The record gives the reactivity of an RNA of 177 nucleotides to DMS. Conditions: 150 mM KOAc, 10 mM MgCl2 and 150 mM bicine (pH 8.5), 24 C.

[RMDB]
RNA sequence: GGGAACGACUCGAGUAGAGUCGAAAACACAUUCUAUUCGUAGAAUGUGGAACGUAGAGAGAUCGACACCGUCGCAGCUAUGUCGAACGAGGAAGAGCGCGCAGGGAUCGGGCUUCGGCCCGAUCAACAAAAAGGCGAGUUUCGACUCGCCUUUUUGAAAAGAAACAACAACAACAAC
Reactivity to DMS in 0.01 (KOAc 150mM, MgCl2 10mM, bicine 150mM(pH8.5), 24C), signal-to-noise 2, nucleotides 027 to 126: c000a000c000a000u000u000c000u000a020u000u020c120g010u000a000g020a020a000u000g010u000g010g000a080a080c120g000u000a060g000a070g000a140g010a040u000c030g010a060c080a070c090c060g010u000c080g000c100a080g010c060u000a080u010g010u010c050g010a010a090c060g010a090g000g000a040a020g000a030g000c020g000c080g030c140a080g000g020g010a010u000c000g010g000g000c000u000u020c250g030g010c000c000c000g000a000u000c010a050a100
Values cover nucleotides 27 to 126.